[RMDB]
RNA sequence: GGGAACGACUCGAGUAGAGUCGAAAAGAUAUGGAUCGCAACGGGAGCUAAUAUUCGGAAACGAAUGAUAGCGAAGAACGUUGUCGAUCCUAAGUCAAACACUCUCCAAGUUCGCUUGGAGAGUGAAGGCGUUAGUGUAGUUCGCUACACUAACGCCAAAAGAAACAACAACAACAAC
Reactivity to DMS in 0.01 (KOAc 150mM, MgCl2 10mM, bicine 150mM(pH8.5), 24C), signal-to-noise 1, nucleotides 027 to 126: g050a020u000a110u010g000g000a020u010c000g020c000a000a000c010g010g000g000a070g000c000u010a000a130u000a000u000u000c010g030g000a040a020a110c000g040a010a000u000g000a100u000a000g020c000g010a100a100g010a230a300c010g000u010u010g010u000c070g010a000u000c010c000u020a040a090g000u000c010a070a220a240c000a000c000u000c000u000c000c000a000a020g000u000u010c270g020c050u000u010g000g000a000g010a000g010u000g000a000a020
Reactivity to 2A3 in 0.01 (KOAc 150mM, MgCl2 10mM, bicine 150mM(pH8.5), 24C), signal-to-noise 1, nucleotides 027 to 126: g020a000u040a020u080g000g000a000u000c000g010c000a000a000c010g050g090g030a230g000c000u000a010a010u020a090u130u030c000g000g050a020a010a030c010g010a010a020u030g100a120u140a000g010c030g050a140a070g150a030a000c010g000u020u030g090u120c040g000a000u000c000c010u000a010a010g020u030c000a100a000a090c010a000c000u000c010u000c000c000a020a000g010u040u140c280g110c280u000u000g010g020a000g040a000g000u000g000a010a010
Source: RMDB library TTRDES, as collected in RNAgym. This 177-nucleotide RNA was probed chemically with DMS and 2A3. The reactions ran in a buffer of 150 mM KOAc, 10 mM MgCl2 and 150 mM bicine (pH 8.5), at 24 C. High DMS reactivity at an A or C suggests that its Watson-Crick edge is free. DMS adducts were read by reverse transcription with MarathonRT.